[RMDB]
RNA sequence: GGGAACGACUCGAGUAGAGUCGAAAAUGAGAAUACUUUUAGUACAAGCGAGUACACGCAGUAUAGUGCCACUUGUGUGAGAAUACUUUUAGUACAAGCGAGUACACGCUCUAUACUGCCACUUGUGUAAGUCACCUUAGUUCGCUAAGGUGACUUAAAAAGAAACAACAACAACAAC
Reactivity to 2A3 in 0.01 (KOAc 150mM, MgCl2 10mM, bicine 150mM(pH8.5), 24C), signal-to-noise 5, nucleotides 027 to 126: u180g050a010g080a100a100u120a180c040u080u060u040u130a110g040u140a060c030a120a010g030c040g060a030g020u140a030c050a010c110g000c000a000g000u000a000u000a000g030u030g020c000c010a010c010u020u020g020u000g030u080g070a120g100a090a020u050a040c010u070u180u130u300a050g030u020a020c000a050a010g000c000g040a010g060u080a080c060a030c090g020c000u000c000u000a000u000a010c010u000g000c000c000a020c020u000u010g020u010g040
Reactivity to DMS in 0.01 (KOAc 150mM, MgCl2 10mM, bicine 150mM(pH8.5), 24C), signal-to-noise 4, nucleotides 027 to 126: u020g000a140g030a130a110u010a050c020u000u010u010u010a110g000u020a070c130a080a130g000c030g020a090g000u020a050c130a100c300g000c000a010g020u000a010u000a000g020u000g040c010c150a030c020u010u000g010u000g000u030g010a080g000a100a130u000a030c060u000u010u030u010a120g010u000a020c040a110a210g000c040g010a020g010u030a050c160a170c300g010c010u000c000u000a020u000a000c000u000g000c010c120a030c000u000u000g000u000g010